[RMDB]
RNA sequence: GGGAACGACUCGAGUAGAGUCGAAAAAGGAUAGGAUUCGUCCUAUCCUACACCAAAACCUCCUGGCGGAGCGGCGCCGGCCCCGCCGGGAAGGCCGCCUUAUUGGUAGCUGGUUCGCCAGCUACAACGUUAGCAACGGAUUCGUCCGUUGCUAACGAAAAGAAACAACAACAACAAC
Reactivity to DMS in 0.01 (KOAc 150mM, MgCl2 10mM, bicine 150mM(pH8.5), 24C), signal-to-noise 2, nucleotides 027 to 126: a010g000g000a000u000a000g000g010a050u010u010c190g000u000c000c000u000a020u000c000c010u000a020c110a260c030c040a110a070a120a200c070c030u000c020c000u000g010g020c010g000g020a010g000c020g020g000c060g010c040c040g010g000c000c000c040c040g030c020c000g030g030g000a010a030g040g020c120c140g000c080c060u000u000a090u010u000g030g020u000a000g000c010u000g000g000u000u000c230g050c000c010a000g000c000u000a000c020a050a040
Reactivity to 2A3 in 0.01 (KOAc 150mM, MgCl2 10mM, bicine 150mM(pH8.5), 24C), signal-to-noise 2, nucleotides 027 to 126: a010g000g000a000u000a020g000g010a000u030u060c140g040u030c050c000u010a000u020c000c000u000a000c020a030c000c030a040a050a090a110c010c000u000c000c010u000g010g000c010g020g040a000g000c060g080g050c050g030c070c040g050g000c030c000c000c000g000c000c000g000g000g010a000a000g020g020c020c040g110c040c010u210u180a230u080u220g110g000u000a000g000c000u000g010g030u050u050c240g050c070c000a000g000c000u000a000c000a000a000
An RNA of 177 nucleotides, treated with DMS and 2A3 and read out base by base. The RNA was probed in 150 mM KOAc, 10 mM MgCl2 and 150 mM bicine (pH 8.5) at 24 C. For DMS the reverse transcriptase was MarathonRT. For DMS, 1,205 sequencing reads were counted.